[RMDB]
RNA sequence: GGGAACGACUCGAGUAGAGUCGAAAAAAGGGCCCAGAGGGGAAUGAGCCUCGUCGUCGACGAAGGGGUGCAUUCCGAAGAGCUGGCCUGGCGUCGUCCGGCUCCCUCGACCGCACCGGAGCGCUAGCGUAACAGUCAAGUUCGCUUGACUGUUACGAAAAGAAACAACAACAACAAC
Reactivity to DMS in 0.01 (KOAc 150mM, MgCl2 10mM, bicine 150mM(pH8.5), 24C), signal-to-noise 6, nucleotides 027 to 126: a080a050g000g000g000c070c020c060a050g000a100g020g010g000g010a020a010u000g000a230g000c010c000u000c010g000u000c010g020u010c270g010a130c060g010a040a030g010g000g000g010u010g000c000a020u000u000c000c010g020a110a080g000a140g010c030u000g000g000c030c010u000g010g000c010g020u000c100g000u000c000c010g000g000c230u000c010c010c010u000c140g000a080c110c110g000c150a130c010c010g000g000a070g000c020g010c020u000a110g000
Reactivity to 2A3 in 0.01 (KOAc 150mM, MgCl2 10mM, bicine 150mM(pH8.5), 24C), signal-to-noise 2, nucleotides 027 to 126: a000a000g090g020g000c120c150c040a020g060a030g040g260g000g010a010a010u020g010a010g030c010c000u000c010g040u010c010g040u070c120g080a300c040g020a060a020g000g000g000g020u030g010c010a010u000u000c000c010g020a100a020g030a040g030c030u020g000g000c000c010u010g020g000c020g020u090c020g160u020c010c000g010g010c030u020c010c010c000u070c070g130a160c060c060g020c040a030c020c000g000g000a020g010c030g000c030u040a060g120